[RMDB]
RNA sequence: GGGAACGACUCGAGUAGAGUCGAAAAAUACCGGCAGUCCAAGUGAUGGCCGAUAUUAUUGGGCCUAAAGCGUCCGUAGCUUGCUGUGUAAGUCCAUUGGGAAAUCGACCAGCUCAACUGGUCGGCGUGAAGGUCUCCAGUUCGCUGGAGACCUUCAAAAAGAAACAACAACAACAAC
Reactivity to 2A3 in 0.01 (KOAc 150mM, MgCl2 10mM, bicine 150mM(pH8.5), 24C), signal-to-noise 1, nucleotides 027 to 126: a000u040a040c000c020g000g020c020a050g030u000c000c100a270a180g030u170g300a010u030g030g010c000c000g000a000u000a040u050u050a110u070u040g020g000g010c000c010u060a060a040a010g040c000g050u010c000c000g040u000a000g000c020u000u000g030c000u000g060u010g000u100a000a000g080u000c040c000a130u090u050g050g000g000a040a100a000u140c000g040a000c010c000a020g040c040u050c240a020a240c010u000g050g000u030c000g000g000c000g000
Reactivity to DMS in 0.01 (KOAc 150mM, MgCl2 10mM, bicine 150mM(pH8.5), 24C), signal-to-noise 1, nucleotides 027 to 126: a000u000a050c030c000g000g100c020a160g080u030c000c000a010a180g050u010g030a030u000g000g000c010c000g000a130u000a000u000u000a130u000u050g010g000g000c010c050u010a050a050a160g050c030g000u000c000c070g080u030a010g000c050u000u000g010c000u020g000u010g000u010a030a010g000u000c010c020a160u000u000g000g000g010a050a100a040u070c000g000a010c000c000a000g020c050u010c240a100a190c000u000g000g000u010c000g010g000c130g000
An RNA of 177 nucleotides, treated with 2A3 and DMS and read out base by base. The DMS profile rests on 1,272 reads. For 2A3 the reverse transcriptase was SuperScript II with manganese. Conditions: 150 mM KOAc, 10 mM MgCl2 and 150 mM bicine (pH 8.5), 24 C. It was measured as part of the RMDB library RFM100. For 2A3, 458 sequencing reads were counted.